[RMDB]
RNA sequence: GGGAACGACUCGAGUAGAGUCGAAAAACUUUUAGCGAUUAACGUUAUAGAAAUGUCCUUGGCAUAUCGCUAUGCACAGAGGUAUUAGUAGCGCAAUAGCUAUUGAAGGACAUUACCUCUCAAAUAACUAGUGAAAUUUCUUCGGAAAUUUCACUAGAAAAGAAACAACAACAACAAC
Reactivity to DMS in 0.01 (KOAc 150mM, MgCl2 10mM, bicine 150mM(pH8.5), 24C), signal-to-noise 1, nucleotides 027 to 126: a180c070u000u000u000u000a020g000c000g000a080u040u010a080a070c120g020u000u000a070u010a140g000a070a040a020u010g020u020c000c010u000u020g000g000c030a080u000a010u000c040g020c050u000a020u000g040c130a110c210a140g040a020g010g000u000a050u000u000a100g020u010a020g000c020g010c170a020a200u010a180g010c010u000a010u000u000g010a050a030g000g000a050c020a000u000u000a020c010c020u020c000u010c190a050a060a030u000a050a200
Reactivity to 2A3 in 0.01 (KOAc 150mM, MgCl2 10mM, bicine 150mM(pH8.5), 24C), signal-to-noise 1, nucleotides 027 to 126: a000c010u220u080u050u030a000g000c000g020a080u180u160a110a130c030g010u050u060a160u050a120g060a000a040a050u060g000u010c010c000u060u080g030g000c020a010u060a030u270c040g000c010u030a040u140g000c070a040c010a090g150a100g030g120u100a070u030u110a080g040u000a000g010c000g040c050a070a150u040a040g000c030u000a050u050u090g100a040a030g030g030a000c010a000u000u040a020c020c060u000c000u000c040a080a180a040u100a150a120